Notes:
An RNA of 177 nucleotides, treated with DMS and 2A3 and read out base by base. It was measured as part of the RMDB library OK1LIB. For 2A3, 984 sequencing reads were counted. Values cover nucleotides 27 to 126. DMS adducts were read by reverse transcription with MarathonRT. The reactions ran in a buffer of 150 mM KOAc, 10 mM MgCl2 and 150 mM bicine (pH 8.5), at 24 C.
[RMDB]
RNA sequence: GGGAACGACUCGAGUAGAGUCGAAAAGCCUGGAUCCCCUCACCGGGGUCGUUGACCAGGAACGGAUAGAUCAACGGCAGAUUGCCCAGCGCGGCAUCGGAUCCACACGCCGCCGACAUGCCCAGCGUCACCCCACUACGUUCGCGUAGUGGGGUGAAAAAGAAACAACAACAACAAC
Reactivity to DMS in 0.01 (KOAc 150mM, MgCl2 10mM, bicine 150mM(pH8.5), 24C), signal-to-noise 1, nucleotides 027 to 126: g010c010c020u000g000g000a180u000c050c000c000c070u000c080a070c260c160g050g000g010g020u000c000g010u000u000g010a080c040c040a080g050g050a100a140c000g000g000a200u000a020g020a110u000c000a100a040c020g000g000c040a230g000a020u000u040g070c000c010c040a000g020c300g000c160g040g020c040a130u000c000g000g000a140u000c050c050a080c080a070c190g010c110c020g010c040c000g000a000c000a060u050g040c110c000c000a180g030c130g050
Reactivity to 2A3 in 0.01 (KOAc 150mM, MgCl2 10mM, bicine 150mM(pH8.5), 24C), signal-to-noise 2, nucleotides 027 to 126: g000c000c000u000g080g030a080u070c010c000c000c000u090c020a030c000c010g010g010g000g000u000c030g040u000u060g000a040c000c010a050g000g140a090a080c070g090g050a090u150a280g070a070u070c100a090a020c000g010g000c010a010g030a150u070u240g020c010c020c010a080g050c060g010c020g150g000c000a030u020c030g030g000a050u090c080c010a040c010a010c060g000c000c000g030c000c010g020a040c040a020u070g000c050c000c000a000g030c020g110